[RMDB]
RNA sequence: GGGAACGACUCGAGUAGAGUCGAAAAUGUCAUGGAUUCCAGUUUUUGGAAUUGUUUGUCAAGAUGGGAGACUUCUUGGCAAAAUUAAGGGGAGGUGGUUGGUUUAUAUCUGUAAACCAGGAAGGUGCAUAUACAGAAGUCAAAUGGCAAAGAAAACCAAGCGUACUUGGUUCGCCAAGUACGCUUGAAAAGAAACAACAACAACAAC
Reactivity to 2A3 in 0.01 (KOAc 150mM, MgCl2 10mM, bicine 150mM(pH8.5), 24C), signal-to-noise 1, nucleotides 027 to 156: u110g050u110c060a040u050g130g000a040u030u040c030c010a040g160u000u010u080u220u260g000g000a000a000u000u060g060u090u000u030g010u010c000a010a000g010a040u060g000g150g040a130g060a080c000u020u000c000u010u000g000g000c000a020a020a020a020u130u030a030a070g000g020g000g040a010g000g000u010g080g000u040u040g030g000u000u090u090a090u010a020u200c020u010g060u000a010a050a050c000c000a000g080g020a000a080g010g010u050g000c020a000u020a000u020a140c060a030g020a050a010g030u030c020a030a070a050u080g000g060c000a110a050a080g070a020a150a000a000c080